RNA sequence: GGGAACGACUCGAGUAGAGUCGAAAAGCAGAGAUCAGUUUCUGACACCUUAGAACUCUUCAUGUGCAAGAGGAAAUUGAAACAAUAACAACAUAUUUAGGCAGUAGGCAAAAUGAUUUGCUUUGGCGAUCUUCUCACAGUUCGCUGUGAGAAGAUCAAAAGAAACAACAACAACAAC
Reactivity to DMS in 0.01 (KOAc 150mM, MgCl2 10mM, bicine 150mM(pH8.5), 24C), signal-to-noise 2, nucleotides 027 to 126: g020c020a050g000a140g020a090u000c070a070g040u000u000u010c010u000g020a170c190a170c030c010u000u020a040g000a090a230c020u000c010u010u010c040a240u010g050u000g000c210a000a060g010a030g060g000a020a070a110u000u010g010a070a100a180c080a010a070u010a050a090c020a020a040c110a080u010a060u030u010u000a040g030g010c040a090g030u000a060g020g010c110a010a010a070a130u000g010a040u020u010u010g010c020u020u010u000g000g000c270
Reactivity to 2A3 in 0.01 (KOAc 150mM, MgCl2 10mM, bicine 150mM(pH8.5), 24C), signal-to-noise 2, nucleotides 027 to 126: g000c010a000g050a020g000a150u050c090a040g040u060u050u020c000u040g020a020c010a030c030c000u040u060a070g050a120a040c010u020c030u060u000c030a120u240g070u110g160c020a000a000g030a020g050g060a020a100a060u150u040g040a130a120a020c060a060a090u140a100a020c060a050a020c030a080u180a010u150u150u060a030g030g000c020a000g010u040a030g030g070c060a010a010a020a060u120g040a090u110u000u000g010c000u100u020u020g090g000c070